[RMDB]
RNA sequence: GGGAACGACUCGAGUAGAGUCGAAAAGAUAUGGAAUGUUCAAGCAUCGAUCUUACGGACUCGGAAACGAGUUUAAGGGAGCUUAACAUUCCUAAGUCAAAGGCAAUUAACUUCGGUUAAUUGCCAAGAUACCGACUUGGUUCGCCAAGUCGGUAUCAAAAGAAACAACAACAACAAC
Reactivity to 2A3 in 0.01 (KOAc 150mM, MgCl2 10mM, bicine 150mM(pH8.5), 24C), signal-to-noise 2, nucleotides 027 to 126: g000a000u010a010u060g010g030a030a020u020g010u100u160c300a090a020g000c000a030u300c060g010a020u020c020u010u010a050c120g170g070a020c030u000c010g000g000a000a000a020c010g000a000g000u000u050u000a010a010g000g020g000a020g000c000u000u020a000a010c000a010u000u000c000c000u020a000a000g000u000c000a090a070a030g000g000c000a000a000u000u000a010a000c010u050u120c250g040g000u000u000a000a000u010u010g000c010c010a000a000
Reactivity to DMS in 0.01 (KOAc 150mM, MgCl2 10mM, bicine 150mM(pH8.5), 24C), signal-to-noise 2, nucleotides 027 to 126: g010a010u000a010u010g000g000a030a010u000g000u000u010c300a030a010g000c000a300u000c230g020a050u010c000u000u000a020c300g000g000a010c010u010c010g010g000a000a010a020c000g020a020g000u000u000u000a000a000g000g000g000a030g010c010u000u010a040a020c010a000u000u000c000c010u000a020a060g000u000c010a100a150a160g000g010c000a010a010u000u000a000a000c000u010u000c300g040g000u000u010a000a000u000u000g000c000c000a010a030